Record summary
An RNA of 207 nucleotides, treated with 2A3 and read out base by base. 2A3 adducts were read by reverse transcription with SuperScript II with manganese. Values cover nucleotides 27 to 156. High 2A3 reactivity points to a flexible backbone, as in loops and unpaired stretches. The reactions ran in a buffer of 150 mM KOAc, 10 mM MgCl2 and 150 mM bicine (pH 8.5), at 24 C.
[RMDB]
RNA sequence: GGGAACGACUCGAGUAGAGUCGAAAAAGAGGCGGAUACGUCCGGCUCAACGGGGGAUACGUGUGGUGCCGUCCGCUCCCCCUAUGGCAUAACAAAUGCACCACACACUAGGCUACGGCCUAGUGAAAAAAGGUGUAUGUGUUCGCACAUACACCAACUCGCAUUUUCUCUUCGGAGAAAAUGCGAGAAAAGAAACAACAACAACAAC
Reactivity to 2A3 in 0.01 (KOAc 150mM, MgCl2 10mM, bicine 150mM(pH8.5), 24C), signal-to-noise 1, nucleotides 027 to 156: a000g000a000g060g060c000g000g000a000u020a030c130g030u010c000c000g050g030c000u020c000a040a050c100g000g000g050g000g000a000u010a100c020g000u030g000u000g040g000u000g030c030c000g010u070c050c060g020c120u060c000c000c000c000c000u040a130u110g110g050c050a080u030a300a020c050a060a100a040u080g000c000a000c000c010a000c010a000c000a000c000u000a000g000g030c000u030a020c220g060g010c000c000u000a000g000u010g030a040a000a000a000a010a010g030g000u000g000u000a000u000g050u030g010u000u060c220g050c140a000c000a000u000a000c000a020c000c000a000a010